[RMDB]
The record gives the reactivity of an RNA of 177 nucleotides to 2A3 and DMS.
The reactions ran in a buffer of 150 mM KOAc, 10 mM MgCl2 and 150 mM bicine (pH 8.5), at 24 C.
For 2A3 the reverse transcriptase was SuperScript II with manganese.
For DMS, 24,103 sequencing reads were counted.
RNA sequence: GGGAACGACUCGAGUAGAGUCGAAAAGGAGGCUCCGACAGCGGCUGUGGAGUAUGCUCGCACAAGCAACGCCUUUGCGGCAAAACGGCUUGUGGAAGCACCACUUCCAAACACGUUGCCGAGGUGUUAUGGAUUUAAUGUUCGCAUUAAAUCCAUAAAAAGAAACAACAACAACAAC
Reactivity to 2A3 in 0.01 (KOAc 150mM, MgCl2 10mM, bicine 150mM(pH8.5), 24C), signal-to-noise 9, nucleotides 027 to 126: g110g030a040g050g020c010u010c030c010g050a030c020a020g020c010g060g000c080u060g050u090g070g000a010g010u030a040u050g010c000u020c050g170c010a010c000a000a010g020c020a040a070c060g010c010c010u110u170u300g110c140g000g000c000a030a060a030a060c100g070g000c000u020u030g010u010g020g030a040a010g000c010a020c050c040a020c000u150u080c010c000a050a130a020c070a010c040g030u020u030g000c010c010g030a060g010g030u110g010u060
Reactivity to DMS in 0.01 (KOAc 150mM, MgCl2 10mM, bicine 150mM(pH8.5), 24C), signal-to-noise 8, nucleotides 027 to 126: g000g010a110g010g010c030u000c030c010g030a070c090a040g000c050g000g000c090u010g010u040g000g000a030g000u010a160u000g000c000u000c120g010c010a030c010a020a010g000c010a130a140c220g010c000c020u010u050u040g020c160g010g010c010a060a040a110a130c270g010g000c020u000u000g020u000g000g000a070a040g010c020a050c140c120a050c010u000u010c000c010a050a120a080c110a120c050g010u000u000g000c020c020g010a100g000g010u010g000u010